Notes:
Structure probing data (2A3 and DMS) for a 207-nucleotide construct. For 2A3 the reverse transcriptase was SuperScript II with manganese. DMS (dimethyl sulfate) methylates the pairing face of unpaired adenines and cytosines.
RNA sequence: GGGAACGACUCGAGUAGAGUCGAAAAAGUUUUGCUUCAGGAUGGUGUUACUCUUGCCACACAACACGCCCUUUUCCUACAGGGAUAAAUGAGGAAAUGAUAGGUGACAAACACUAAAUUGGAGAUCUUGCACAUGAGACUAUCUUACAGUAUGAUCCAACAGGAAUUGCUUCGGCAAUUCCUGUUGAAAAGAAACAACAACAACAAC
Reactivity to 2A3 in 0.01 (KOAc 150mM, MgCl2 10mM, bicine 150mM(pH8.5), 24C), signal-to-noise 3, nucleotides 027 to 156: a000g020u040u020u030u070g050c010u010u050c010a030g020g000a080u020g010g010u010g040u080u110a080c010u030c040u080u090g040c090c000a100c000a000c000a050a150c060a040c110g020c000c000c000u070u040u000u070c050c000u110a150c030a040g080g050g000a060u120a020a060a040u150g020a030g060g000a000a030a030u080g070a060u140a070g000g010u010g040a050c040a050a160a000c060a030c120u150a100a100a130u120u070g030g000a020g000a020u070c010u020u080g030c070a070c000a130u100g020a000g010a060c030u050a090u110c020u040u110a040c000a000g060u070a100u140g040a050u020c000
Reactivity to DMS in 0.01 (KOAc 150mM, MgCl2 10mM, bicine 150mM(pH8.5), 24C), signal-to-noise 1, nucleotides 027 to 156: a160g010u020u020u000u000g030c030u020u000c000a130g000g040a300u000g010g030u030g000u000u020a070c060u000c060u010u000g010c020c000a110c030a030c050a050a110c100a040c090g020c090c000c000u000u010u010u000c040c010u020a130c140a130g010g010g000a090u000a010a070a090u000g020a160g010g020a030a040a060u010g020a130u020a120g020g030u000g010a150c050a080a120a070c070a040c050u010a070a040a220u000u020g000g020a030g020a090u000c030u020u000g060c030a030c040a060u000g010a080g000a110c070u010a060u010c010u000u000a090c000a120g010u010a090u030g010a090u000c020